[RMDB]
RNA sequence: GGGAACGACUCGAGUAGAGUCGAAAAAGCAGGUGGAACGCCCGCCCUGGAAGGGAGGAUGCCAUGCAACAGCUCAACGCUGGUGACUCGUCUGGUGGAGGCGCACGGAGUGGUGCUCGGCAAAACGUGCGUUGCAUGGUUUCGACCAUGCAACGCAAAAAGAAACAACAACAACAAC
Reactivity to DMS in 0.01 (KOAc 150mM, MgCl2 10mM, bicine 150mM(pH8.5), 24C), signal-to-noise 1, nucleotides 027 to 126: a110g000c040a030g000g010u000g000g000a130a140c100g000c060c020c030g010c010c000c030u000g020g000a090a080g000g010g010a070g000g000a080u000g000c030c030a070u010g000c010a060a110c020a060g000c000u000c140a070a060c190g030c010u000g020g000u000g040a090c040u010c050g000u020c000u010g000g070u010g030g000a080g000g000c120g000c040a030c090g060g010a120g010u000g000g000u000g010c020u000c030g000g020c030a050a020a060a160c230g010
This 177-nucleotide RNA was probed chemically with DMS. The reactions ran in a buffer of 150 mM KOAc, 10 mM MgCl2 and 150 mM bicine (pH 8.5), at 24 C. Reactivities are given for positions 27 through 126. DMS adducts were read by reverse transcription with MarathonRT.